This 177-nucleotide RNA was probed chemically with 2A3 and DMS. 2A3 adducts were read by reverse transcription with SuperScript II with manganese. The DMS profile rests on 3,121 reads.
[RMDB]
RNA sequence: GGGAACGACUCGAGUAGAGUCGAAAACGUCGCAGCCUUCCGUCGACGUGCUGCGCGACCAGGGCUUCAUGAUCGGCUUCGGCAUCGACCCGAAGGAUCCGAACAAGAUCGGCGACGAAACCGAUCCAGCGAGUAUACCAUUCGUGGUAUACUCGCUAAAAGAAACAACAACAACAAC
Reactivity to 2A3 in 0.01 (KOAc 150mM, MgCl2 10mM, bicine 150mM(pH8.5), 24C), signal-to-noise 6, nucleotides 027 to 126: c040g030u060c020g010c040a010g010c010c020u040u030c070c050g080u050c050g030a230c050g030u070g130c110u160g000c010g000c000g000a010c000c020a040g000g040g030c020u080u090c110a120u160g050a080u040c030g020g030c020u030u020c010g000g000c060a190u150c130g130a190c010c020c010g010a010a020g040g030a030u040c010c020g020a070a060c020a120a000g020a080u060c030g020g000c010g020a050c030g020a080a010a010c000c000g010a030u040c040c020
Reactivity to DMS in 0.01 (KOAc 150mM, MgCl2 10mM, bicine 150mM(pH8.5), 24C), signal-to-noise 3, nucleotides 027 to 126: c040g000u010c000g020c030a100g000c020c000u000u030c200c300g040u000c070g000a040c130g020u000g000c050u050g000c090g040c020g020a100c000c170a190g000g010g000c060u000u000c130a080u010g000a020u000c000g000g030c080u010u000c030g000g030c070a140u020c150g010a170c130c000c050g020a040a050g000g000a050u030c000c020g000a060a070c090a110a070g000a040u010c000g000g040c020g010a020c130g020a060a060a200c030c000g020a040u000c050c160